An RNA of 177 nucleotides, treated with DMS and 2A3 and read out base by base.
DMS adducts were read by reverse transcription with MarathonRT.
Source: RMDB library TTRDES, as collected in RNAgym.
Conditions: 150 mM KOAc, 10 mM MgCl2 and 150 mM bicine (pH 8.5), 24 C.
The DMS profile rests on 3,891 reads.
The 2A3 profile rests on 7,201 reads.
High 2A3 reactivity points to a flexible backbone, as in loops and unpaired stretches.

RNA sequence: GGGAACGACUCGAGUAGAGUCGAAAAGAUAUGGAGCCAUGCUUCAUCGAUCUACACAUCGGAAACGAUGUAAGUAGGGAGAAGACAUGGCUCCUAAGUCAAAGGUGGACACUUCGGUGUCCACCAACAUUUGGUCAACGUUCGCGUUGACCAAAUGAAAAGAAACAACAACAACAAC
Reactivity to DMS in 0.01 (KOAc 150mM, MgCl2 10mM, bicine 150mM(pH8.5), 24C), signal-to-noise 4, nucleotides 027 to 126: g000a030u000a300u020g000g000a000g020c000c000a000u000g000c010u000u000c020a300u000c150g000a240u000c000u010a000c000a180c000a010u010c000g010g010a100a060a190c000g000a020u000g000u010a020a130g030u010a000g000g000g000a230g000a040a030g010a160c000a010u000g000g000c000u000c000c000u000a000a070g020u000c020a060a150a110g020g020u000g000g000a020c000a010c010u000u030c180g040g020u000g010u000c020c000a000c010c010a030a040
Reactivity to 2A3 in 0.01 (KOAc 150mM, MgCl2 10mM, bicine 150mM(pH8.5), 24C), signal-to-noise 3, nucleotides 027 to 126: g030a000u040a030u110g000g000a000g020c010c020a000u010g000c030u040u020c010a290u300c060g000a020u010c000u020a010c030a000c000a020u010c010g010g030a020a080a030c010g000a010u000g040u020a120a210g000u000a000g010g030g000a130g020a010a010g020a080c000a010u000g000g000c000u000c000c000u000a000a010g000u010c020a040a050a110g000g000u000g010g000a000c010a010c020u060u140c300g120g000u000g020u000c000c000a000c000c000a010a000